[RMDB]
Source: RMDB library OK2TST, as collected in RNAgym. The record gives the reactivity of an RNA of 177 nucleotides to DMS. The DMS profile rests on 688 reads. For DMS the reverse transcriptase was MarathonRT. In probing experiments dimethyl sulfate is read out at A N1 and C N3, which are open when not base-paired. The reactions ran in a buffer of 150 mM KOAc, 10 mM MgCl2 and 150 mM bicine (pH 8.5), at 24 C.

RNA sequence: GGGAACGACUCGAGUAGAGUCGAAAACGGGCAGAUCUACGCUGAGCUCGGAACGGCUGCACGAGCCUGGAUUGCAGUCCAGCCUGGGCAUGAGAGCUUCGGGAACCUGGUGAACAAGGGUAAGAUCUAGAUCACGAGCUUUCGAGCUCGUGAUCUAAAAAGAAACAACAACAACAAC
Reactivity to DMS in 0.01 (KOAc 150mM, MgCl2 10mM, bicine 150mM(pH8.5), 24C), signal-to-noise 1, nucleotides 027 to 126: c100g030g000g020c040a060g030a030u000c070u000a060c020g000c140u070g000a090g000c000u040c000g000g010a060a280c200g000g020c000u000g020c040a030c120g000a160g020c070c070u000g010g010a040u000u000g020c120a140g000u000c010c040a040g000c140c020u020g000g000g060c020a100u010g020a140g030a100g050c020u010u000c150g070g010g010a050a090c140c030u020g000g010u000g000a070a120c120a050a070g000g010g000u020a070a060g000a050u000c140